[RMDB]
RNA sequence: GGGAACGACUCGAGUAGAGUCGAAAAGUGGGAGUUGGGCCAGUUAGCUUAGUAAACUUUAAGAGGCAGGGAAAGAGGGAUGUGAGGUUGGGCCUGGAAAAGUGAGGUGACAGGGCCUAGCAAGAGAGUAGAGUAUACGGUUCGCCGUAUACUCUACAAAAGAAACAACAACAACAAC
Reactivity to DMS in 0.01 (KOAc 150mM, MgCl2 10mM, bicine 150mM(pH8.5), 24C), signal-to-noise 3, nucleotides 027 to 126: g030u000g010g000g000a080g030u010u000g000g020g010c040c050a100g030u010u010a070g000c030u000u010a080g020u010a060a080a100c100u000u000u010a070a110g000a080g010g010c110a060g000g000g010a040a040a080g000a100g010g000g010a080u020g030u000g010a060g010g010u000u000g000g010g010c010c010u000g000g000a070a050a050a100g000u000g010a060g010g010u000g020a090c090a100g000g010g010c000c010u010a040g010c040a070a090g010a090g010a190
Reactivity to 2A3 in 0.01 (KOAc 150mM, MgCl2 10mM, bicine 150mM(pH8.5), 24C), signal-to-noise 2, nucleotides 027 to 126: g070u050g010g050g000a170g020u070u050g030g000g000c020c030a050g030u070u070a020g030c000u020u010a020g000u160a120a110a120c020u040u070u080a050a030g020a030g020g050c060a030g040g000g000a130a160a020g100a070g020g010g020a050u090g090u060g100a080g000g090u040u040g020g030g000c000c030u040g040g050a080a110a000a020g110u070g050a030g020g030u020g000a010c030a070g000g010g000c000c010u010a030g010c020a050a000g080a010g010a020